Background:
Source: RMDB library OK2TST, as collected in RNAgym. Chemical mapping of a 177-nucleotide RNA with DMS and 2A3. For DMS, 851 sequencing reads were counted. Reactivities are given for positions 27 through 126.
[RMDB]
RNA sequence: GGGAACGACUCGAGUAGAGUCGAAAACUUCUGGCGAUAUCCACCACCUCCUUAAGACCUCGUGGACGGAAGAGGUAAAAAGGCUUGCCACCGCUUUCUUGAGCAAUUGCGUCAUAAAAUUGAUUACCCUUAGACCAAGGUUCGCCUUGGUCUAAGGAAAAGAAACAACAACAACAAC
Reactivity to DMS in 0.01 (KOAc 150mM, MgCl2 10mM, bicine 150mM(pH8.5), 24C), signal-to-noise 1, nucleotides 027 to 126: c090u010u000c040u020g000g000c000g000a110u000a110u030c040c010a100c050c100a000c020c010u010c020c020u000u000a140a140g000a070c050c000u000c070g020u000g030g020a100c100g020g020a190a150g000a060g000g000u010a020a020a120a080a120g010g000c160u000u010g000c010c010a190c060c050g000c030u010u000u000c030u010u010g020a150g010c060a080a090u000u000g010c040g020u000c020a030u010a080a030a010a110u010u010g020a180u010u000a110c140
Reactivity to 2A3 in 0.01 (KOAc 150mM, MgCl2 10mM, bicine 150mM(pH8.5), 24C), signal-to-noise 1, nucleotides 027 to 126: c010u040u040c020u100g040g000c030g050a040u010a030u200c010c010a030c010c030a000c030c030u010c020c030u060u070a050a030g050a080c000c000u050c070g070u170g020g030a030c080g000g000a060a020g000a000g050g000u040a000a070a030a030a000g030g030c010u020u000g010c000c000a030c010c080g030c020u210u010u080c040u180u090g040a060g000c030a060a040u110u150g020c050g010u110c000a050u260a120a100a180a100u120u120g030a040u130u190a080c030